[RMDB]
RNA sequence: GGGAACGACUCGAGUAGAGUCGAAAAGCCCGAACUGAGCCAAGUCCGAGCGAAGGGUCCGCGUGGGGAGGAAACGCAACCCGAGAGUGAGAUGAACGACAAGGGGCGAAGAUCCUCGGAAGGAAUUACGGGAAUCUGUUCGCAGAUUCCAAAAGAAACAACAACAACAAC
Reactivity to DMS in 0.01 (KOAc 150mM, MgCl2 10mM, bicine 150mM(pH8.5), 24C), signal-to-noise 9, nucleotides 027 to 129: g000c020c000c000g000a090a040c140u020g000a050g030c050c070a060a060g030u030c010c000g020a080g000c070g000a040a040g000g020g010u020c060c020g060c100g030u040g010g010g010g010a010g000g030a020a030a020c060g000c100a150a080c020c020c010g020a110g020a050g040u000g020a060g020a060u030g010a050a050c070g010a090c120a090a150g020g000g000g020c140g030a050a050g010a070u030c000c020u000c060g000g000a030a030g000g000a030a040u030u040a090c200g000
Reactivity to 2A3 in 0.01 (KOAc 150mM, MgCl2 10mM, bicine 150mM(pH8.5), 24C), signal-to-noise 8, nucleotides 027 to 129: g030c000c000c010g020a040a010c070u050g000a000g020c020c020a110a050g060u000c000c010g020a010g010c020g030a020a030g040g010g010u020c020c040g070c040g010u080g010g020g000g000a010g010g000a020a030a010c050g010c020a030a060c000c010c020g020a020g010a000g030u110g010a060g000a070u100g050a080a020c030g030a000c030a040a100g020g000g010g000c030g010a010a000g010a050u020c000c010u020c030g020g030a010a030g040g050a050a050u170u100a100c100g030

This 170-nucleotide RNA was probed chemically with DMS and 2A3. For DMS, 49,512 sequencing reads were counted. Values are in units of 0.01, from 0 to 300, in steps of 10. Source: RMDB library 15KLIB, as collected in RNAgym.